Chemical mapping of a 177-nucleotide RNA with DMS and 2A3. Reactivities are given for positions 27 through 126. 2A3 adducts were read by reverse transcription with SuperScript II with manganese.
[RMDB]
RNA sequence: GGGAACGACUCGAGUAGAGUCGAAAACAGAGUGUCACUGUGACAGUGUCAGUCACACAGUCACUCAGAGUGUGACUCACUGACUCUCUGACAGUGUGAGACAGUGAGACAGUGUCUCUCUCAGAGACUAUAAUUGGGAAUUCGUUCCCAAUUAUAGAAAAGAAACAACAACAACAAC
Reactivity to DMS in 0.01 (KOAc 150mM, MgCl2 10mM, bicine 150mM(pH8.5), 24C), signal-to-noise 9, nucleotides 027 to 126: c130a080g010a030g010u000g010u000c020a050c070u000g010u000g010a080c020a080g010u000g010u010c110a120g010u000c020a030c010a010c060a100g010u000c040a050c100u000c090a100g000a080g010u000g010u000g000a090c040u000c030a020c030u000g000a190c050u000c020u000c040u010g010a080c130a080g010u000g010u000g000a050g000a060c010a020g000u000g010a060g000a040c030a030g010u000g000u000c010u000c010u000c040u000c100a110g000a090g000a110
Reactivity to 2A3 in 0.01 (KOAc 150mM, MgCl2 10mM, bicine 150mM(pH8.5), 24C), signal-to-noise 9, nucleotides 027 to 126: c040a010g030a010g030u040g020u030c010a010c030u020g010u060g150a040c020a060g070u030g070u170c070a030g080u020c000a000c000a000c010a030g090u080c030a030c130u110c050a020g030a030g050u070g020u040g040a060c020u010c070a020c020u040g040a050c000u000c000u000c010u020g060a060c040a090g090u070g020u020g130a050g010a020c010a030g080u010g050a040g040a020c010a010g020u020g010u010c000u000c000u000c000u010c070a040g020a010g020a140
The reactions ran in a buffer of 150 mM KOAc, 10 mM MgCl2 and 150 mM bicine (pH 8.5), at 24 C.
It was measured as part of the RMDB library OK2TRN.
For DMS the reverse transcriptase was MarathonRT.